Structure probing data (2A3 and DMS) for a 177-nucleotide construct. For 2A3 the reverse transcriptase was SuperScript II with manganese. High DMS reactivity at an A or C suggests that its Watson-Crick edge is free. Source: RMDB library TTRDES, as collected in RNAgym. For DMS, 7,313 sequencing reads were counted.

[RMDB]
RNA sequence: GGGAACGACUCGAGUAGAGUCGAAAAGAUAUGGAGGAUACUUGCUCGAUAAGCUGCCCAUCGGAAACGAUGGACAGCUUUUGACGAGCUUGUAUCCUCCUAAGUCAAAGUACCCUUCGGGGUACAACCCGAUAUUAAAGUUCGCUUUAAUAUCGGGAAAAGAAACAACAACAACAAC
Reactivity to 2A3 in 0.01 (KOAc 150mM, MgCl2 10mM, bicine 150mM(pH8.5), 24C), signal-to-noise 1, nucleotides 027 to 126: g030a020u090a050u220g000g000a000g010g000a000u000a010c010u000u030g000c000u000c020g050a080u010a140a000g000c000u000g000c000c000c010a000u000c000g020g030a130a020a040c010g010a000u000g000g000a000c010a000g000c040u010u010u000u010g060a030c000g000a000g000c000u000u000g000u000a000u000c010c000u000c000c010u000a000a000g010u000c000a000a000a020g000u000a000c010c000c000u000u050c230g090g000g000g000u020a010c010a010a020
Reactivity to DMS in 0.01 (KOAc 150mM, MgCl2 10mM, bicine 150mM(pH8.5), 24C), signal-to-noise 5, nucleotides 027 to 126: g010a040u000a300u010g000g010a030g010g000a020u000a000c000u000u000g010c000u000c000g010a160u000a010a020g010c000u000g010c010c000c000a010u000c000g000g000a120a090a230c010g020a010u000g000g010a000c000a000g000c010u000u000u000u000g020a260c170g000a010g020c010u020u000g010u000a000u000c000c000u000c000c000u000a000a060g010u000c010a100a140a160g020u000a010c000c010c000u000u010c210g040g000g020g000u010a000c010a070a120